[RMDB]
RNA sequence: GGGAACGACUCGAGUAGAGUCGAAAAUUGAAGGUAAAACAGCCUGUGGGUGAAACACACCCACAGGGCCCAUUGGGCGCUAGCACUCUGGUAUCACAGUACCUUUGUGCGCCUGUUUUACCGAAGGCCGGUAAGCAGUUCGCUGCUUACAAAAGAAACAACAACAACAAC
Reactivity to 2A3 in 0.01 (KOAc 150mM, MgCl2 10mM, bicine 150mM(pH8.5), 24C), signal-to-noise 9, nucleotides 027 to 129: u100u100g070a080a010g000g000u010a010a000a000a000c000a000g010c000c000u010g000u000g000g000g000u010g040a050a100a010c150a010c000a000c060c010c010a000c000a000g000g000g000c000c000c000a030u260u300g000g000g000c020g010c090u120a050g000c010a000c000u000c000u000g000g010u020a020u140c080a040c030a260g060u010a000c000c000u000u000u000g000u000g000c000g000c000c000u000g000u010u000u000u000a000c000c000g000a000a000g040g010c020c020g020
Reactivity to DMS in 0.01 (KOAc 150mM, MgCl2 10mM, bicine 150mM(pH8.5), 24C), signal-to-noise 8, nucleotides 027 to 129: u060u040g020a160a120g000g000u000a000a000a000a000c000a000g010c000c000u000g020u000g010g040g000u010g040a090a120a080c280a170c000a000c010c000c000a020c020a020g000g020g030c000c000c000a060u040u110g010g000g020c020g020c030u070a050g030c020a010c000u000c010u020g010g000u000a000u050c180a140c300a190g010u010a000c000c000u030u030u010g020u000g000c000g020c020c000u010g000u040u000u010u000a000c000c010g000a020a050g030g010c010c050g010